[RMDB]
RNA sequence: GGGAACGACUCGAGUAGAGUCGAAAACUCACUAACUUCGGUUAGUGAGAAAUAAAUUCAGCGGUUUAUAUUUCGAGGGCAUAACCGCUGAUGCCCUCGAAAAAAGCAUUCCCUUCGGGGAAUGCAACAUUAGGGAGACGUUCGCGUCUCCCUAAUGAAAAGAAACAACAACAACAAC
Reactivity to DMS in 0.01 (KOAc 150mM, MgCl2 10mM, bicine 150mM(pH8.5), 24C), signal-to-noise 2, nucleotides 027 to 126: c020u000c000a010c000u000a000a000c010u000u010c190g030g000u000u000a000g000u010g000a010g000a020a060a040u010a050a100a050u010u000c040a050g000c050g020g000u000u000u010a050u000a120u020u000u010c020g000a020g000g000g030c010a010u000a070a090c030c020g010c040u010g000a020u000g000c000c000c010u000c030g020a000a000a020a110a070a060g000c000a000u000u000c000c010c000u010u010c160g000g000g000g000a010a000u000g000c020a020a050
Reactivity to 2A3 in 0.01 (KOAc 150mM, MgCl2 10mM, bicine 150mM(pH8.5), 24C), signal-to-noise 1, nucleotides 027 to 126: c000u000c000a000c000u000a020a000c000u030u030c160g120g000u000u010a000g010u030g000a020g000a000a010a000u030a000a020a020u130u080c040a020g040c040g100g000u110u220u140a200u040a060u090u160u120c010g000a000g010g000g030c000a000u030a060a070c030c000g000c000u010g000a000u040g000c000c020c000u000c010g000a010a000a010a010a000a020g000c000a000u000u000c000c000c000u020u030c210g040g010g020g000a000a000u000g010c010a000a000
An RNA of 177 nucleotides, treated with DMS and 2A3 and read out base by base.
The DMS profile rests on 1,918 reads.
For 2A3 the reverse transcriptase was SuperScript II with manganese.
Reactivities are given for positions 27 through 126.
Source: RMDB library M2PK50, as collected in RNAgym.